[RMDB]
RNA sequence: GGGAACGACUCGAGUAGAGUCGAAAACUCACUCACUACGGUGAGUGAGAAUGCUUAAGCCUCAAUAAAGCUUGCCUUGAGUGCCUCAAGCAGAUAUAGAGUGAAACAUUUACUAUGGGCAAGCAGGGAGCAACGGCUCGAGUACGCUCGAGCCGAAUGAUUUAAUACUCUUCGGAGUAUUAAAUCAAAAAGAAACAACAACAACAAC
Reactivity to DMS in 0.01 (KOAc 150mM, MgCl2 10mM, bicine 150mM(pH8.5), 24C), signal-to-noise 1, nucleotides 027 to 156: c010u000c000a030c010u000c010a000c020u010a100c240g110g020u000g010a030g040u030g010a030g010a100a080u000g020c010u010u010a050a080g040c000c000u000c010a050a130u010a110a100a140g030c000u010u000g030c000c050u000u000g020a040g010u000g020c060c000u000c050a280a100g040c020a100g000a180u000a150u010a150g000a090g000u010g020a200a070a040c020a070u010u000u000a100c130u000a180u000g020g020g000c000a010a020g020c020a140g020g040g000a130g000c040a090a200c000g010g000c010u000c010g000a010g000u000a080c300g020c000u000c000g000a060g020c030c010g010a010a010
Reactivity to 2A3 in 0.01 (KOAc 150mM, MgCl2 10mM, bicine 150mM(pH8.5), 24C), signal-to-noise 3, nucleotides 027 to 156: c000u000c000a000c000u000c000a000c020u030a010c190g060g000u000g000a000g000u000g000a000g000a040a080u070g000c020u040u070a070a010g030c000c000u000c010a050a160u090a170a160a000g000c010u000u000g010c000c020u030u080g080a030g010u070g030c020c000u030c030a060a050g040c060a010g120a040u140a020u100a110g080a000g050u170g060a080a270a020c030a020u140u210u150a020c040u080a080u110g010g020g000c000a010a000g000c000a000g000g060g020a070g010c020a140a040c020g000g000c000u000c010g000a020g010u040a030c170g030c130u010c000g000a000g000c000c000g000a000a000
Overview: An RNA of 207 nucleotides, treated with DMS and 2A3 and read out base by base. The 2A3 profile rests on 1,405 reads. For DMS the reverse transcriptase was MarathonRT.